About this RNA
The data come from the RNA Mapping Database (RMDB), library OK2TST. The record gives the reactivity of an RNA of 177 nucleotides to DMS. Reactivities are given for positions 27 through 126. For DMS the reverse transcriptase was MarathonRT. Conditions: 150 mM KOAc, 10 mM MgCl2 and 150 mM bicine (pH 8.5), 24 C.

[RMDB]
RNA sequence: GGGAACGACUCGAGUAGAGUCGAAAAACAGCCGAGCUGGGUGAGACAGUCAAGCUGGCCUGCCGCGUGACGGGCACACCCAAGCCUGUCAUCAGCUGGUACAAAGAUGGGAAAGCAGUGCAGGUGGUGACGGGGGAACAUUCGUGUUCCCCCGUCAAAAAGAAACAACAACAACAAC
Reactivity to DMS in 0.01 (KOAc 150mM, MgCl2 10mM, bicine 150mM(pH8.5), 24C), signal-to-noise 1, nucleotides 027 to 126: a130c030a040g030c000c030g000a280g030c040u000g020g030g030u010g010a040g010a150c070a030g000u010c080a220a080g000c000u000g000g010c030c030u000g000c000c070g000c130g030u000g030a010c030g000g000g020c000a060c140a190c000c060c010a160a070g010c000c000u010g000u010c070a020u000c080a080g010c010u000g000g000u020a110c110a010a120a070g000a100u030g010g010g020a150a080a130g030c000a020g040u000g010c060a030g000g020u010g000g030